The data come from the RNA Mapping Database (RMDB), library TTRDES. The record gives the reactivity of an RNA of 177 nucleotides to DMS and 2A3. The 2A3 profile rests on 3,262 reads. Conditions: 150 mM KOAc, 10 mM MgCl2 and 150 mM bicine (pH 8.5), 24 C. DMS adducts were read by reverse transcription with MarathonRT.
RNA sequence: GGGAACGACUCGAGUAGAGUCGAAAAGAUAUGGAGUGAGGAGGGACAUGCGACUGGAUCGGAAACGAUCCACUCGCAACAGCCCUUUCACUCCUAAGUCAAAUCAUCAUGGUUCGCCAUGAUGAAAGGUAGACUGUAUCUUCGGAUACAGUCUACCAAAAGAAACAACAACAACAAC
Reactivity to DMS in 0.01 (KOAc 150mM, MgCl2 10mM, bicine 150mM(pH8.5), 24C), signal-to-noise 1, nucleotides 027 to 126: g000a030u000a080u010g000g000a040g010u000g000a020g040g000a010g000g010g060a000c250a080u020g000c000g030a010c170u000g000g000a000u000c000g000g000a010a000a010c010g010a000u000c000c000a000c050u000c000g060c000a010a010c250a180g040c000c000c000u000u000u000c000a000c000u000c000c000u000a000a050g000u020c000a050a130a210u010c000a010u000c000a020u010g000g000u000u000c290g020c000c000a000u000g000a000u000g010a020a140a090
Reactivity to 2A3 in 0.01 (KOAc 150mM, MgCl2 10mM, bicine 150mM(pH8.5), 24C), signal-to-noise 1, nucleotides 027 to 126: g030a020u020a020u040g010g010a010g000u010g010a030g130g080a010g050g020g000a060c210a300u300g030c020g010a010c020u010g000g030a010u000c000g030g000a000a030a000c010g000a000u000c020c000a010c010u040c000g000c010a070a120c100a050g000c000c000c060u000u000u020c010a010c010u000c010c000u010a010a000g000u000c020a000a030a090u020c000a010u000c000a010u000g050g030u080u090c300g010c090c000a000u000g000a000u000g000a070a050a010